Overview:
This 207-nucleotide RNA was probed chemically with DMS and 2A3. The data come from the RNA Mapping Database (RMDB), library OK3TST. The RNA was probed in 150 mM KOAc, 10 mM MgCl2 and 150 mM bicine (pH 8.5) at 24 C. The 2A3 profile rests on 868 reads. For DMS, 2,883 sequencing reads were counted.
RNA sequence: GGGAACGACUCGAGUAGAGUCGAAAAAGUCCUAGCUAAUCAAGAGGAUGGGGAAGGAGAAUCACUUGAGCCCAGGAGUUUGAGGCUGCAGUGAGCUAUGAUCAUGCCGCUGCACUCCAGCACAAUGAUUAAUAUCAUGAACUCAGACCCAAUCUGAUAAUUACCCAGUCUUCGGACUGGGUAAUUAAAAAGAAACAACAACAACAAC
Reactivity to DMS in 0.01 (KOAc 150mM, MgCl2 10mM, bicine 150mM(pH8.5), 24C), signal-to-noise 2, nucleotides 027 to 156: a110g020u000c010c010u000a100g000c090u000a110a080u020c080a100a100g030a090g030g020a140u010g040g010g020g040a090a110g000g010a090g000a130a130u000c020a060c100u020u000g030a050g040c010c000c060a200g000g000a080g040u000u000u010g020a090g030g010c060u010g020c020a040g050u000g020a110g020c030u000a150u000g020a150u010c040a040u010g020c050c070g030c040u000g000c050a090c000u000c050c000a070g000c020a110c020a050a040u000g010a070u000u000a080a120u000a120u000c050a070u010g030a060a080c040u000c020a030g000a100c000c000c040a030a300u000c050u000g010a300
Reactivity to 2A3 in 0.01 (KOAc 150mM, MgCl2 10mM, bicine 150mM(pH8.5), 24C), signal-to-noise 2, nucleotides 027 to 156: a000g050u010c010c020u010a060g050c020u190a110a150u110c110a010a090g010a000g080g060a040u050g020g020g030g020a080a040g040g000a030g010a020a050u050c020a010c090u070u020g000a000g040c010c010c020a070g050g000a120g030u050u090u120g060a060g040g000c040u020g000c010a010g000u000g050a080g000c010u040a050u240g040a090u180c090a020u120g000c000c000g030c030u000g000c000a030c000u050c050c020a020g090c020a010c030a080a000u040g000a000u090u110a130a050u110a060u210c040a050u100g070a030a030c010u010c030a010g060a160c000c020c000a010a070u050c010u000g020a030